[RMDB]
RNA sequence: GGGAACGACUCGAGUAGAGUCGAAAAUCCACGCAGGUCGCGAACAAGAUGAAGGCGUAGCAAGUUCAGGUCGCCGCGCACGAACUGGCGCUCGAUCUCCGCCUCGCUCGAGUAGGUUUCCCCGGGGGUUAUCCUUUUACUUCGGUAAAAGGAUAACAAAAGAAACAACAACAACAAC
Reactivity to DMS in 0.01 (KOAc 150mM, MgCl2 10mM, bicine 150mM(pH8.5), 24C), signal-to-noise 2, nucleotides 027 to 126: u000c020c050a070c060g020c060a120g010g020u000c040g040c030g010a090a080c120a120a080g010a080u000g000a100a080g020g000c010g040u010a070g030c080a100a090g000u010u000c130a060g000g010u000c010g010c040c020g030c090g010c010a070c050g000a030a060c060u020g020g000c050g010c030u000c060g000a050u000c020u010c090c000g020c060c010u000c000g000c010u010c000g010a020g000u000a000g010g000u000u000u000c000c000c000c040g010g000g000g000
Reactivity to 2A3 in 0.01 (KOAc 150mM, MgCl2 10mM, bicine 150mM(pH8.5), 24C), signal-to-noise 3, nucleotides 027 to 126: u030c010c000a010c030g030c030a030g060g080u090c030g010c020g040a140a020c070a140a060g120a150u120g040a120a010g070g000c030g020u040a010g030c060a110a090g030u180u190c050a060g010g120u070c030g040c070c020g010c020g010c010a090c070g050a150a030c040u080g050g000c020g000c040u040c020g020a020u000c020u020c040c010g030c000c000u000c000g010c000u000c000g010a010g000u020a040g000g260u040u080u080c010c000c000c010g000g010g000g000